[RMDB]
RNA sequence: GGGAACGACUCGAGUAGAGUCGAAAAGAUAUGGAAUCUGAACUACUCUAUCAAGUCCGAGGAUCUCGGAAACGAGGGAGGACGAAGUAGAGCAGAUUCCUAAGUCAAACCGUGGUUCGCCACGGAACACGUCUCAUACCUUCGGGUAUGAGACGUGAAAAGAAACAACAACAACAAC
Reactivity to DMS in 0.01 (KOAc 150mM, MgCl2 10mM, bicine 150mM(pH8.5), 24C), signal-to-noise 1, nucleotides 027 to 126: g020a050u050a300u000g000g000a060a010u000c010u040g000a110a020c000u010a300c000u030c100u010a080u000c030a090a300g000u000c000c000g000a060g010g000a000u000c000u000c000g000g000a060a020a140c000g000a000g000g020g000a010g000g060a010c020g000a120a150g030u000a020g030a020g000c020a020g000a060u000u000c000c000u000a000a070g030u000c030a060a190a140c000c000g010u000g000g000u000u000c280g080c000c000a000c020g010g000a050a140
Reactivity to 2A3 in 0.01 (KOAc 150mM, MgCl2 10mM, bicine 150mM(pH8.5), 24C), signal-to-noise 1, nucleotides 027 to 126: g010a030u060a040u120g000g000a010a010u030c000u000g020a080a070c060u120a070c000u280c010u060a070u210c070a180a060g000u000c030c020g110a300g000g010a040u000c000u000c000g000g090a160a020a010c010g000a000g010g000g000a020g000g000a000c000g010a050a000g030u040a010g000a010g000c000a000g010a000u000u000c000c000u000a110a050g010u010c000a100a030a090c030c020g000u030g000g110u040u080c300g070c090c000a000c000g020g000a020a030
An RNA of 177 nucleotides, treated with DMS and 2A3 and read out base by base. Values are in units of 0.01, from 0 to 300, in steps of 10. It was measured as part of the RMDB library TTRDEL. For DMS, 723 sequencing reads were counted. The 2A3 profile rests on 1,933 reads.